Conditions: 150 mM KOAc, 10 mM MgCl2 and 150 mM bicine (pH 8.5), 24 C. Chemical mapping of a 177-nucleotide RNA with 2A3 and DMS. For 2A3 the reverse transcriptase was SuperScript II with manganese. The 2A3 profile rests on 1,949 reads.
[RMDB]
RNA sequence: GGGAACGACUCGAGUAGAGUCGAAAAGGAAAUAGGUAUGCGGUCGCUAUUAAAAUAUUGCGACAAACUGGCACACAGCAAGCGAGUGGUGACGAGUGCACACAAGUCGUUCCCAGCCACAAAAAAAGUUAGAUGUACUGUUCGCAGUACAUCUAACAAAAGAAACAACAACAACAAC
Reactivity to 2A3 in 0.01 (KOAc 150mM, MgCl2 10mM, bicine 150mM(pH8.5), 24C), signal-to-noise 2, nucleotides 027 to 126: g090g020a030a090a020u140a060g000g060u070a030u110g080c060g050g010u010c010g000c030u010a030u070u090a080a030a030a030u220a050u060u080g010c000g000a010c000a000a080a020c010u030g040g000c020a010c030a010c020a040g070c040a080a020g010c060g070a030g050u040g020g010u010g040a040c030g040a040g030u120g030c020a020c000a000c010a100a000g000u000c020g000u000u000c000c000c000a020g050c000c010a050c000a020a130a030a060a000a010a000
Reactivity to DMS in 0.01 (KOAc 150mM, MgCl2 10mM, bicine 150mM(pH8.5), 24C), signal-to-noise 2, nucleotides 027 to 126: g010g030a050a080a130u010a080g010g010u020a060u000g010c100g070g010u000c010g030c010u010a080u010u000a100a120a070a150u020a060u000u000g000c000g000a000c010a030a090a090c120u000g000g000c020a020c040a020c040a170g000c020a080a050g020c080g010a050g030u000g000g000u000g000a080c090g000a090g010u000g000c060a070c040a100c080a040a020g000u000c000g030u000u000c000c000c000a090g010c080c110a040c100a000a010a030a100a020a040a120